RNA sequence: GGGAACGACUCGAGUAGAGUCGAAAAAACACGGUAGCUAUACCUGAGUGAUUCAUCAAUGCAGAAGUAGCUUCAAUAGAUGGGUAUUCAAUCCAUUGAACACAAUUUUCUGGUGCUCCUGCCUGAAACCCCUAGGUAGUUUCGACUACCUAGGGGUAAAAGAAACAACAACAACAAC
Reactivity to DMS in 0.01 (KOAc 150mM, MgCl2 10mM, bicine 150mM(pH8.5), 24C), signal-to-noise 2, nucleotides 027 to 126: a080a070c060a050c280g010g010u000a030g000c110u000a010u000a100c140c000u010g010a080g040u000g010a110u010u000c200a070u000c100a010a070u000g000c050a080g000a120a140g020u000a060g010c060u000u000c040a030a070u000a110g020a010u000g030g000g010u000a120u000u010c160a070a040u000c030c050a030u000u010g010a050a070c120a070c100a050a100u000u000u000u020c080u030g000g010u000g000c040u000c010c000u000g020c030c070u010g000a060a060
Reactivity to 2A3 in 0.01 (KOAc 150mM, MgCl2 10mM, bicine 150mM(pH8.5), 24C), signal-to-noise 1, nucleotides 027 to 126: a000a000c050a000c010g030g000u020a010g060c040u040a010u040a120c010c030u070g000a090g070u050g010a090u130u140c030a070u050c030a070a120u150g080c020a020g000a110a040g070u040a040g010c000u090u050c060a050a060u030a060g060a030u040g000g000g040u140a260u120u210c090a050a020u030c020c000a000u000u020g050a100a010c060a000c050a100a050u010u190u060u000c030u070g000g050u020g040c000u010c000c000u020g020c000c000u000g050a050a050